[RMDB]
RNA sequence: GGGAACGACUCGAGUAGAGUCGAAAAUCGAGAAUGAGCUCAUUCGAGAAUGAUUUAUCCCGCGAUUGCUCAUUUCUGAGAAAUGAUUGGUAGAAGUUUCUCGAUAGAUAGCGAUACAAAUUGAGAAAAAUUACCGCAGGUUCGCCUGCGGUAAUUUAAAAGAAACAACAACAACAAC
Reactivity to 2A3 in 0.01 (KOAc 150mM, MgCl2 10mM, bicine 150mM(pH8.5), 24C), signal-to-noise 3, nucleotides 027 to 126: u000c000g000a000g000a020a110u050g010a060g080c040u050c300a060u070u050c010g010a010g060a090a100u150g050a010u060u110u090a080u060c020c000c000g030c080g050a020u000u110g020c000u050c060a060u030u060u000c070u110g000a030g080a010a050a010u070g080a100u120u300g140g080u100a100g020a300a020g040u040u010u010c000u000c000g000a000u010a010g090a040u040a020g070c020g000a030u110a110c080a040a210a080u080u300g040a100g090a050a110
Reactivity to DMS in 0.01 (KOAc 150mM, MgCl2 10mM, bicine 150mM(pH8.5), 24C), signal-to-noise 3, nucleotides 027 to 126: u000c010g000a230g000a050a020u000g000a250g000c300u030c020a030u000u000c020g010a170g040a030a060u030g000a060u030u000u050a190u000c000c000c010g000c140g030a040u030u020g000c020u000c120a040u010u010u030c040u050g020a040g010a010a030a010u020g000a150u000u020g010g020u000a100g020a080a240g000u000u000u000c000u000c020g000a030u000a040g000a160u020a000g000c040g000a050u000a050c130a110a150a050u030u030g000a060g010a000a070
Chemical mapping of a 177-nucleotide RNA with 2A3 and DMS. For DMS, 2,950 sequencing reads were counted. It was measured as part of the RMDB library OK1LIB.